Chemical mapping of a 177-nucleotide RNA with 2A3 and DMS.
RNA sequence: GGGAACGACUCGAGUAGAGUCGAAAACAGAGGAUUCGGAUUCUUCCUCAUGCAGGUCUGCAACCGCGUGUUCGAGAGGGUGACUGUCGACCCUCGGCAGAUCGAAAAAUUUCGAAAAGUCCAGAGCCCUGAUUUCAUGGUUCGCCAUGAAAUCAGGAAAAGAAACAACAACAACAAC
Reactivity to 2A3 in 0.01 (KOAc 150mM, MgCl2 10mM, bicine 150mM(pH8.5), 24C), signal-to-noise 1, nucleotides 027 to 126: c020a030g020a040g040g000a050u150u000c070g000g040a030u070u000c070u100u000c020c010u020c000a010u100g010c040a010g000g000u010c000u050g000c030a030a050c070c010g070c070g090u170g040u090u140c110g020a040g000a000g190g030g000u010g090a210c110u120g090u160c040g020a030c000c000c000u000c020g000g030c020a000g030a020u010c020g040a000a000a000a000a000u050u140u060c020g000a040a080a000a030g030u000c000c010a040g000a020g100c000
Reactivity to DMS in 0.01 (KOAc 150mM, MgCl2 10mM, bicine 150mM(pH8.5), 24C), signal-to-noise 2, nucleotides 027 to 126: c060a060g020a100g010g000a080u000u000c060g000g000a020u000u000c080u000u000c000c020u000c070a080u020g010c270a130g000g000u010c010u000g020c040a060a110c050c060g040c270g000u010g030u000u000c140g000a200g000a000g000g000g000u000g000a110c090u010g000u010c110g000a050c000c080c000u000c000g010g040c000a010g000a040u000c010g000a000a080a010a060a170u000u000u020c120g000a060a040a000a060g000u000c010c010a110g000a180g030c100